Background
Structure probing data (DMS and 2A3) for a 207-nucleotide construct.
RNA sequence: GGGAACGACUCGAGUAGAGUCGAAAAUGAUCAAGGGUGAAGUAACUGAUGUCAAACGUCAGCAAGAGUUGAUCAAGUGGGUGUCUGACUCCAUGAACAAACACCCCAUGGGACAGAUCUACCGUGUCGUGAGGGAGGCUCUGGAUGCUGAAAGUGACCCAAGUAACUAGUUCGCUAGUUACUUGGGAAAAGAAACAACAACAACAAC
Reactivity to DMS in 0.01 (KOAc 150mM, MgCl2 10mM, bicine 150mM(pH8.5), 24C), signal-to-noise 2, nucleotides 027 to 156: u010g020a090u010c030a110a070g020g050g040u060g000a080a130g000u000a120a070c010u000g000a030u010g010u020c160a050a090a200c080g030u000c020a020g020c040a050a150g010a110g020u000u000g000a060u010c030a040a160g020u000g000g000g040u000g020u000c030u010g000a120c080u000c050c050a080u010g000a070a120c040a050a050a040c050a050c000c010c030c020a050u000g010g030g000a120c070a140g000a090u000c020u000a100c020c060g010u000g020u000c030g030u000g000a040g030g010g030a110g030g000c030u010c030u010g010g000a100u010g030c000u000g000a050a050a100g000u010g000a150
Reactivity to 2A3 in 0.01 (KOAc 150mM, MgCl2 10mM, bicine 150mM(pH8.5), 24C), signal-to-noise 4, nucleotides 027 to 156: u130g000a010u060c030a020a030g040g020g020u070g070a070a050g050u090a050a020c010u010g020a020u050g090u110c070a120a050a060c040g020u010c000a010g020c040a090a030g030a050g090u030u040g020a040u020c010a040a050g100u170g060g050g000u030g000u010c040u030g020a070c030u060c050c030a070u110g030a090a050c040a060a080a000c020a040c020c010c010c000a030u050g030g030g020a020c020a020g040a030u000c010u070a030c000c030g020u010g030u060c020g010u020g020a010g010g030g000a020g020g000c010u000c010u020g040g010a060u060g010c040u060g040a070a050a020g070u070g020a010
2A3 adducts were read by reverse transcription with SuperScript II with manganese. It was measured as part of the RMDB library OK3TST. The DMS profile rests on 4,177 reads.